Chemical mapping of a 177-nucleotide RNA with DMS. Reactivities are given for positions 27 through 126. DMS (dimethyl sulfate) methylates the pairing face of unpaired adenines and cytosines.
[RMDB]
RNA sequence: GGGAACGACUCGAGUAGAGUCGAAAACUCUGCAUAUUCGUAUGCAGAGAAAUAACGGUCGGCUCAUGCAGCUAGUCGAACAAGCUGCUCGACCUUUUGGUAAAAACCGGAGGUUCGCCUCCGGUAAUCUGUCCCUAACUUUCGAGUUAGGGACAGAAAAAGAAACAACAACAACAAC
Reactivity to DMS in 0.01 (KOAc 150mM, MgCl2 10mM, bicine 150mM(pH8.5), 24C), signal-to-noise 1, nucleotides 027 to 126: c010u000c000u000g020c010a040u010a060u000u040c120g050u000a010u000g000c020a020g000a010g010a020a040a030u030a030a070c200g030g000u000c050g000g000c160u000c280a030u000g020c010a000g000c000u000a110g020u000c290g000a060a100c280a030a020g030c000u000g000c000u000c020g000a000c010c000u000u000u020u030g010g010u010a040a080a060a140a010c020c000g010g010a030g010g030u000u010c290g000c010c000u000c010c030g030g000u020a000a010